[RMDB]
RNA sequence: GGGAACGACUCGAGUAGAGUCGAAAAGAUAUGGAUAGUGGACAUGCUGAUGGGUCGGAAACGACCCUGACAGCAACAGCCAUCAUCCUAAGUCAAACGCACUCCACUCUUCGGAGUGGAGUGCGAAUCAUACAAUAGACUUCGGUCUAUUGUAUGAAAAAGAAACAACAACAACAAC
Reactivity to 2A3 in 0.01 (KOAc 150mM, MgCl2 10mM, bicine 150mM(pH8.5), 24C), signal-to-noise 3, nucleotides 027 to 126: g030a020u060a030u120g000g010a010u030a070g010u010g020g010a070c070a160u120g010c010u010g020a050u040g020g000g020u010c000g000g010a060a070a050c010g000a000c000c010c000u010g000a000c000a010g030c000a030a040c010a020g020c000c000a030u060c020a000u010c010c010u020a110a020g040u050c050a070a050a080c010g010c010a010c000u000c000c000a010c000u020c000u060u130c300g150g000a000g000u000g000g000a010g010u000g010c000g000a000a000
Reactivity to DMS in 0.01 (KOAc 150mM, MgCl2 10mM, bicine 150mM(pH8.5), 24C), signal-to-noise 6, nucleotides 027 to 126: g010a030u000a300u000g000g000a010u000a030g020u000g000g020a060c100a210u000g010c000u000g000a290u000g010g000g010u000c000g010g000a090a090a230c000g000a010c000c000c000u000g000a160c300a020g000c000a010a040c240a130g000c010c000a010u000c060a010u000c000c000u000a040a140g010u000c030a060a100a240c020g010c000a010c000u010c000c000a010c000u000c000u010u010c200g010g000a020g000u000g000g000a000g010u020g000c000g010a010a040